[RMDB]
RNA sequence: GGGAACGACUCGAGUAGAGUCGAAAAAUCGCAUUGUAGGAGGACAUUCCACGGGCUUUGGCUCUCAUCCCUGGCAGGUGGCGCUGAUCAAAAGUGGGUUCCUCACUAGGAAACUCAGCUGCGGCGACGAGCAGUAAUGAUUCGUCAUUACUGCUCGAAAAGAAACAACAACAACAAC
Reactivity to DMS in 0.01 (KOAc 150mM, MgCl2 10mM, bicine 150mM(pH8.5), 24C), signal-to-noise 6, nucleotides 027 to 126: a090u010c050g010c050a070u000u010g000u000a070g010g010a060g000g010a100c200a090u010u010c030c030a080c100g000g000g020c080u000u010u000g010g010c040u000c040u000c070a090u010c030c020c020u000g010g000c080a070g010g020u000g010g010c190g010c040u000g010a070u010c090a050a050a080a100g030u000g010g010g000u000u000c020c010u000c160a080c120u000a110g010g010a070a070a090c060u000c020a090g000c060u000g000c050g010g010c090g020a140
Reactivity to 2A3 in 0.01 (KOAc 150mM, MgCl2 10mM, bicine 150mM(pH8.5), 24C), signal-to-noise 4, nucleotides 027 to 126: a000u080c030g010c020a050u100u110g080u130a050g000g070a010g020g010a040c020a100u140u090c060c010a030c060g030g060g010c050u090u090u100g050g010c000u010c020u010c040a070u080c010c010c040u030g050g020c050a020g020g050u030g010g000c030g000c040u040g000a050u070c070a010a080a050a020g030u050g010g030g000u030u020c000c000u030c020a090c040u060a010g030g030a050a040a050c030u040c040a030g010c040u050g030c030g050g020c010g010a060